[RMDB]
RNA sequence: GGGAACGACUCGAGUAGAGUCGAAAAUAUCGAGUAUAGCUUAGCAAACUAUACACUUGCCGCCAUGGCUGAACACUAUGUAGCCUGAGUACAGGAUGACCGACCAGUAAGAGUGUUCAUAAGUCCCCCUAUAUUAGACUUUCGAGUCUAAUAUAGGAAAAGAAACAACAACAACAAC
Reactivity to DMS in 0.01 (KOAc 150mM, MgCl2 10mM, bicine 150mM(pH8.5), 24C), signal-to-noise 9, nucleotides 027 to 126: u020a090u020c090g000a110g020u000a000u000a000g010c000u000u010a190g010c110a200a110a100c000u000a000u000a000c000a140c140u020u010g010c010c020g010c120c100a070u030g010g020c020u010g000a020a020c030a020c020u000a030u010g010u010a080g020c100c000u000g010a140g020u000a070c060a060g010g010a110u020g010a070c030c040g010a090c050c030a040g000u010a080a120g010a020g010u010g010u000u000c000a030u010a050a090g010u000c000c000c150
Reactivity to 2A3 in 0.01 (KOAc 150mM, MgCl2 10mM, bicine 150mM(pH8.5), 24C), signal-to-noise 9, nucleotides 027 to 126: u250a030u090c070g010a010g010u000a000u000a010g010c030u050u030a020g040c070a020a020a020c000u000a010u010a010c040a030c060u040u110g020c000c020g060c080c100a170u250g030g000c010u010g020a030a000c000a010c030u050a040u180g100u150a060g040c000c010u050g020a080g080u110a200c060a070g030g030a130u170g130a160c010c020g020a020c000c020a010g020u050a110a030g030a000g060u010g010u010u010c010a030u050a130a020g080u020c010c000c000
Conditions: 150 mM KOAc, 10 mM MgCl2 and 150 mM bicine (pH 8.5), 24 C. The record gives the reactivity of an RNA of 177 nucleotides to DMS and 2A3. Reactivities are given for positions 27 through 126.